[RMDB]
RNA sequence: GGGAACGACUCGAGUAGAGUCGAAAAAAAUUACUAGAUAUGGAUUGAAGGGAGCCUAUAUGCGAUAGCUCGGAAACGAGCACAUCGUUUGAUAGGCGAAGAACUUCAAUCCUAAGUCGCUAAGCAACGUAUUCCACAAGUUCGCUUGUGGAAUACGAAAAGAAACAACAACAACAAC
Reactivity to DMS in 0.01 (KOAc 150mM, MgCl2 10mM, bicine 150mM(pH8.5), 24C), signal-to-noise 1, nucleotides 027 to 126: a030a050a090u000u000a070c060u010a050g020a040u000a300u010g010g000a030u010u000g000a020a010g010g000g000a040g010c000c000u000a000u000a050u000g000c000g000a010u000a120g020c010u010c000g010g020a070a120a110c020g010a040g000c010a100c240a030u000c000g010u000u010u010g010a040u000a000g000g000c020g000a030a060g030a060a100c000u000u000c000a000a000u000c000c000u000a000a060g010u000c060g010c240u000a090a060g010c130a040a070